[RMDB]
RNA sequence: GGGAACGACUCGAGUAGAGUCGAAAAUUGAUAAGUCUAUUUCGUGCUUAUCAAGAUUCAUGUUUUGGAUACAGUACUUCAUCCACAAAUAAAAGGAACGCUGAUAAAUCUGGUUUUAUGGUUCCGAGUCACUAGAGAGGGUCUGGAUUUAUUGGGAAUGAUAAAAUCAGUUCGCUGAUUUUAUCAUAAAAGAAACAACAACAACAAC
Reactivity to DMS in 0.01 (KOAc 150mM, MgCl2 10mM, bicine 150mM(pH8.5), 24C), signal-to-noise 4, nucleotides 027 to 156: u000u000g000a020u010a020a000g030u010c080u010a150u000u000u000c150g030u010g010c000u000u000a000u000c010a030a030g010a240u010u000c040a120u000g010u000u000u010u000g020g010a080u000a090c050a100g020u010a080c060u000u000c060a130u000c010c020a090c070a050a090a140u010a070a080a140a170g010g010a040a030c070g070c090u000g010a080u010a030a040a040u010c050u000g010g010u010u000u000u010a050u010g010g020u010u000c010c020g010a150g000u000c060a080c050u000a080g010a100g010a070g030g030g030u000c030u000g000g000a070u000u000u000a050u010u000g010g020g000a150
Reactivity to 2A3 in 0.01 (KOAc 150mM, MgCl2 10mM, bicine 150mM(pH8.5), 24C), signal-to-noise 6, nucleotides 027 to 156: u000u010g000a000u000a000a000g020u000c050u130a250u130u170u200c110g030u150g010c000u000u000a000u000c000a000a000g030a060u140u140c090a070u150g110u040u130u090u080g030g000a030u040a070c030a060g090u030a060c070u080u110c050a070u000c030c010a040c050a030a170a110u220a070a120a030a010g050g020a030a020c060g020c160u070g060a110u110a100a100a050u070c070u110g100g000u040u050u060u110a040u090g030g010u040u000c010c010g000a030g030u040c010a010c080u060a020g010a000g010a030g070g020g000u010c020u020g020g020a030u030u060u070a090u080u150g030g010g030a100